[RMDB]
RNA sequence: GGGAACGACUCGAGUAGAGUCGAAAAGUAGCAUUUAAUGUCUUUCAGGGCAUUGAAACGGCUGUUGGCCAUUAUGUUCAUGCUCGCCUGAAGGGUGGUCUUAUUUUAAAGUUUGACUCUGGCACCGCUGAAAUGCUAUGUUCGCAUAGCAUUUCAGAAAAGAAACAACAACAACAAC
Reactivity to 2A3 in 0.01 (KOAc 150mM, MgCl2 10mM, bicine 150mM(pH8.5), 24C), signal-to-noise 2, nucleotides 027 to 126: g060u040a000g010c020a010u040u070u090a010a000u040g010u030c030u000u220u070c080a060g040g050g000c010a010u030u080g040a050a030a020c060g030g000c000u060g120u280u170g070g000c020c030a030u080u080a140u240g080u010u080c020a010u030g000c020u010c070g030c010c000u050g050a060a030g000g000g050u040g020g010u000c040u030u090a150u080u190u020u150a090a100a040g020u010u040u060g040a010c000u000c050u060g050g000c010a010c030c040g010
Reactivity to DMS in 0.01 (KOAc 150mM, MgCl2 10mM, bicine 150mM(pH8.5), 24C), signal-to-noise 2, nucleotides 027 to 126: g020u010a030g030c020a130u000u000u010a020a030u000g000u000c020u000u020u010c230a160g020g000g010c010a000u000u010g000a040a070a120c140g010g010c020u000g010u010u010g020g030c000c010a140u010u010a060u010g010u000u030c100a060u000g020c020u000c100g010c020c000u000g000a070a050g010g000g010u000g000g000u000c030u010u000a060u000u020u010u000a030a130a180g010u000u000u000g010a060c040u000c080u000g000g000c070a090c040c040g020

Structure probing data (2A3 and DMS) for a 177-nucleotide construct. The DMS profile rests on 1,968 reads. Values cover nucleotides 27 to 126. The reactions ran in a buffer of 150 mM KOAc, 10 mM MgCl2 and 150 mM bicine (pH 8.5), at 24 C.